[RMDB]
Chemical mapping of a 177-nucleotide RNA with 2A3 and DMS. 2A3 adducts were read by reverse transcription with SuperScript II with manganese. The 2A3 profile rests on 1,610 reads.
RNA sequence: GGGAACGACUCGAGUAGAGUCGAAAAUACUCAUGGGAAGUCGGCACAACUCCCGACUAACGGGGAGGUCCGCCGUCUAGCUUAUUGGUCGGAGCUGUUGUGCGGACGUUGAGUAACAGCUAGCCAACAUAGUCGCCUUAUUCGUAAGGCGACUAUGAAAAGAAACAACAACAACAAC
Reactivity to 2A3 in 0.01 (KOAc 150mM, MgCl2 10mM, bicine 150mM(pH8.5), 24C), signal-to-noise 1, nucleotides 027 to 126: u020a000c000u000c020a020u020g070g010g000a120a040g000u000c020g300g000c000a000c030a000a020c000u000c020c000c000g000a010c030u030a030a000c020g000g000g000g000a040g050g120u010c000c060g000c000c000g080u110c020u000a000g000c010u060u100a030u140u080g000g000u070c010g000g060a090g030c180u010g080u000u010g000u010g000c000g030g030a030c010g000u000u010g010a020g020u000a030a050c050a010g070c050u050a040g070c000c000a020a050
Reactivity to DMS in 0.01 (KOAc 150mM, MgCl2 10mM, bicine 150mM(pH8.5), 24C), signal-to-noise 2, nucleotides 027 to 126: u000a020c030u000c030a030u000g000g000g070a080a170g000u000c010g020g080c010a010c030a040a020c000u030c070c010c000g010a060c090u000a050a070c190g000g000g020g050a080g000g000u000c070c080g030c030c050g000u010c050u000a060g000c150u000u000a120u020u000g010g000u000c020g030g000a070g030c100u000g040u000u000g000u000g010c010g000g010a020c000g000u000u000g000a020g000u010a010a070c130a150g000c110u010a070g000c020c010a120a170